The record gives the reactivity of an RNA of 207 nucleotides to 2A3. Values cover nucleotides 27 to 156.
[RMDB]
RNA sequence: GGGAACGACUCGAGUAGAGUCGAAAACGCGAUGGAUACGUCCAUCGCGAAUUCGGCCAAGCCGCGGGCGUUAAACUGUGGCACGGUUGUGCCUAGGUGCAACCCUGCUACUAAUGGCGGUACCCCUGCCCAAGCUACCGUCUACGGACGGUAGCAAGGCUACCGAUUUAUUCGUAAAUCGGUAGCCAAAAGAAACAACAACAACAAC
Reactivity to 2A3 in 0.01 (KOAc 150mM, MgCl2 10mM, bicine 150mM(pH8.5), 24C), signal-to-noise 1, nucleotides 027 to 156: c000g000c000g010a000u000g030g000a030u010a040c210g140u040c000c000a000u010c000g020c000g000a000a000u010u000c010g010g000c010c010a050a080g080c040c040g140c070g020g010g000c020g020u000u040a090a170a050c140u080g010u020g000g000c000a000c000g010g000u020u010g000u000g000c020c030u100a220g090g000u000g010c000a000a000c010c000c000u000g000c000u020a010c010u050a080a140u180g060g010c020g020g010u090a070c000c000c010c000u050g000c020c070c010a050a010g000c000u000a000c000c000g000u000c010u050a050c300g060g000a000c000g000g000u000a000g000c000a000a000
The data come from the RNA Mapping Database (RMDB), library OK3TST. For 2A3, 1,193 sequencing reads were counted.